Record summary
Structure probing data (DMS and 2A3) for a 207-nucleotide construct.
[RMDB]
RNA sequence: GGGAACGACUCGAGUAGAGUCGAAAAGUGGGCUCAAAUGAUCCUCCUGCCUCAACCUCCUUAGGAGAUGGUACUACAGGCAUGCACUACUAUGUCUGGCUAAUUAUUAUUUUAUUUUCUGUAGAGACAAGGUCUCGCUUUGUUAUCCAGGCUGGUAACGUAAAUAGUCGUUCGCGACUAUUUACGUAAAAGAAACAACAACAACAAC
Reactivity to DMS in 0.01 (KOAc 150mM, MgCl2 10mM, bicine 150mM(pH8.5), 24C), signal-to-noise 2, nucleotides 027 to 156: g040u010g020g020g040c000u010c020a070a090a130u000g020a050u000c010c010u000c020c010u010g040c010c020u020c030a050a090c040c010u000c030c020u010u000a160g040g020a040g000a040u020g010g000u000a070c030u000a090c030a000g020g000c040a110u000g030c050a080c110u000a070c040u010a070u020g020u000c020u010g000g010c070u010a030a070u000u010a110u000u000a170u010u000u000u010a100u000u060u010u020c060u030g010u010a120g030a050g000a030c040a070a110g050g010u000c020u000c020g010c080u000u010u010g010u000u000a040u000c020c030a050g030g010c000u020g020g020u010a060
Reactivity to 2A3 in 0.01 (KOAc 150mM, MgCl2 10mM, bicine 150mM(pH8.5), 24C), signal-to-noise 4, nucleotides 027 to 156: g090u100g000g020g040c030u050c120a130a140a160u180g020a110u090c000c030u010c020c020u050g030c020c000u050c030a050a070c030c000u040c010c020u110u130a040g050g020a070g010a050u120g030g000u060a050c030u010a020c030a040g030g000c030a020u090g030c040a020c080u050a020c010u020a080u220g000u000c020u000g010g000c010u020a050a040u080u100a070u090u060a130u050u180u030u040a170u080u140u120u020c050u080g060u070a080g000a000g000a050c040a170a070g090g000u000c000u010c000g000c000u050u050u080g030u010u000a020u000c020c000a000g000g000c020u000g010g010u030a070
Conditions: 150 mM KOAc, 10 mM MgCl2 and 150 mM bicine (pH 8.5), 24 C. For DMS the reverse transcriptase was MarathonRT.